An RNA of 177 nucleotides, treated with DMS and read out base by base. It was measured as part of the RMDB library OK2TRN.
RNA sequence: GGGAACGACUCGAGUAGAGUCGAAAAAUGUUCGGCAGCGAAGCAUAGCGCGGCUGGUUGAGGCGCAGAUCCACCGUUACGAUGGCCGGAAGCUUCACAUCGAUGGUCUGCAAACCGCCAUCGACUAUCGUGACUUUUACUUCGGUAAAAGUCACGAAAAAGAAACAACAACAACAAC
Reactivity to DMS in 0.01 (KOAc 150mM, MgCl2 10mM, bicine 150mM(pH8.5), 24C), signal-to-noise 1, nucleotides 027 to 126: a040u000g000u000u000c010g010g000c030a100g020c090g040a030a090g030c090a030u010a070g000c090g010c010g010g000c010u000g000g010u000u000g040a070g030g000c090g010c040a060g000a060u000c040c000a050c000c060g040u000u000a090c070g020a040u000g020g000c090c070g010g010a140a160g000c020u000u010c010a080c130a170u000c060g000a050u020g000g020u000c050u010g030c120a040a190a100c110c110g010c000c000a020u000c010g020a110c190u020a130